[RMDB]
RNA sequence: GGGAACGACUCGAGUAGAGUCGAAAAGAUAUGGACUCUCUUGCGGCUAGAUUAGGACAUGCCUGAGUGUUCGGAAACGAACAAGAGGGCAACAGCCUACUGUCUAGCCGCAAGAGAGUCCUAAGUCCCUUGUUAAAAGGUUCGCCUUUUAACAAGGAAAAGAAACAACAACAACAAC
Reactivity to DMS in 0.01 (KOAc 150mM, MgCl2 10mM, bicine 150mM(pH8.5), 24C), signal-to-noise 5, nucleotides 027 to 126: g010a090u000a290u010g030g010a020c000u000c000u000c000u000u000g030c020g000g020c010u000a010g000a010u000u010a020g000g010a050c080a240u010g010c000c010u000g000a300g010u000g000u000u000c010g000g000a160a120a240c000g010a000a010c010a030a040g010a300g000g000g010c010a010a080c300a150g000c000c000u010a030c300u000g010u000c000u010a010g000c020c000g020c000a000a000g000a010g000a010g000u010c000c000u000a000a050g010u010c040

Conditions: 150 mM KOAc, 10 mM MgCl2 and 150 mM bicine (pH 8.5), 24 C. The record gives the reactivity of an RNA of 177 nucleotides to DMS. The DMS profile rests on 4,515 reads. The data come from the RNA Mapping Database (RMDB), library TTRINS. Values cover nucleotides 27 to 126.